[RMDB]
RNA sequence: GGGAACGACUCGAGUAGAGUCGAAAAUCAAAGAUCAAAGAUAGAUGAGCCCACAAAGAUGAGAAAGAAUCAAUGCAACAACACCAAAAACUGAAAAGCCAGAGUGCCUCUUCUCCUCCAAAUGACUGCAACACCUCUACUGCAAGGGCACAGAACACAUUUUAGGUCAGUUCGCUGACCUAAAAUGAAAAGAAACAACAACAACAAC
Reactivity to DMS in 0.01 (KOAc 150mM, MgCl2 10mM, bicine 150mM(pH8.5), 24C), signal-to-noise 2, nucleotides 027 to 156: u000c060a100a090a090g050a160u010c080a090a100a150g060a110u000a100g060a180u030g010a110g040c000c040c060a130c110a060a050a040g020a080u000g020a070g010a080a070a120g040a080a060u030c060a100a100u000g020c040a030a060c030a030a100c000a060c020c020a030a100a020a210a110c020u000g010a080a150a080a150g020c100c010a190g020a050g000u000g010c030c000u000c050u000u000c050u000c030c010u000c000c030a020a090a030u020g000a100c060u010g000c100a020a060c030a090c040c020u000c050u000a070c070u000g080c040a060a170g020g020g060c020a070c020a060g010a070a100c110a100
Reactivity to 2A3 in 0.01 (KOAc 150mM, MgCl2 10mM, bicine 150mM(pH8.5), 24C), signal-to-noise 2, nucleotides 027 to 156: u040c020a100a000a010g080a000u050c040a060a090a030g100a110u110a030g130a040u030g030a020g020c000c060c000a040c100a010a050a000g060a040u060g000a020g060a030a090a030g050a020a050u110c040a050a170u100g070c000a050a030c010a020a010c000a070c030c040a040a030a080a090a110c060u030g070a050a060a000a030g060c010c000a000g010a040g100u070g000c020c000u000c060u050u050c020u010c020c000u030c020c020a040a200a090u060g000a030c020u030g000c000a040a030c000a060c000c030u050c050u110a060c020u050g010c030a010a020g000g010g000c010a010c000a030g030a000a020c070a000